An RNA of 207 nucleotides, treated with 2A3 and DMS and read out base by base. The RNA was probed in 150 mM KOAc, 10 mM MgCl2 and 150 mM bicine (pH 8.5) at 24 C. Values cover nucleotides 27 to 156. Reactivities are rounded to 0.1 and cut off at 0 and 3. Source: RMDB library M2RFPK, as collected in RNAgym.
RNA sequence: GGGAACGACUCGAGUAGAGUCGAAAAGUAUUCAUUCUCCUUUCUCGAUAGAGAUUGGAGUCAUACAACCCCAGAAACCAUUCCUUAUACCUUGAGUAUUGCUGAAUUCAGUUUUGCGUGCAUGCUCUUAAUGGGUGCACCUUCGGGUGCACCCAAAUAGAGAGAUUACUUUCGAGUAAUCUCUCUAAAAAGAAACAACAACAACAAC
Reactivity to 2A3 in 0.01 (KOAc 150mM, MgCl2 10mM, bicine 150mM(pH8.5), 24C), signal-to-noise 1, nucleotides 027 to 156: g010u050a030u020u210c070a040u120u040c070u000c020c000u000u050u000c010u010c040g190a270u090a300g000a000g000a000u000u000g000g020a000g000u000c000a000u020a020c070a040a070c000c000c010c020a010g150a130a060a020c030c000a080u090u300c100c050u180u200a150u130a300c010c040u140u180g040a010g000u060a050u070u190g030c020u060g110a230a150u060u220c040a200g050u000u040u220u260g050c070g000u040g000c010a020u010g000c000u030c000u020u080a190a080u040g000g000g000u000g030c040a000c000c000u030u050c260g050g000g030u000g060c020a010c000c010c020a010a000a000
Reactivity to DMS in 0.01 (KOAc 150mM, MgCl2 10mM, bicine 150mM(pH8.5), 24C), signal-to-noise 1, nucleotides 027 to 156: g010u000a010u010u000c010a100u010u000c000u000c030c000u000u010u010c010u000c000g000a300u010a280g010a000g000a010u010u020g000g020a030g020u020c300a020u000a010c010a100a260c100c000c010c110a150g000a130a100a090c070c030a090u010u010c020c040u010u010a090u000a040c030c030u010u010g010a150g090u000a050u000u050g020c080u000g010a060a060u000u000c100a080g000u000u020u000u000g000c050g070u000g040c020a100u000g000c000u010c020u020u010a100a130u010g020g020g070u000g020c060a010c050c000u010u000c300g040g020g000u000g040c000a030c000c010c000a000a000a060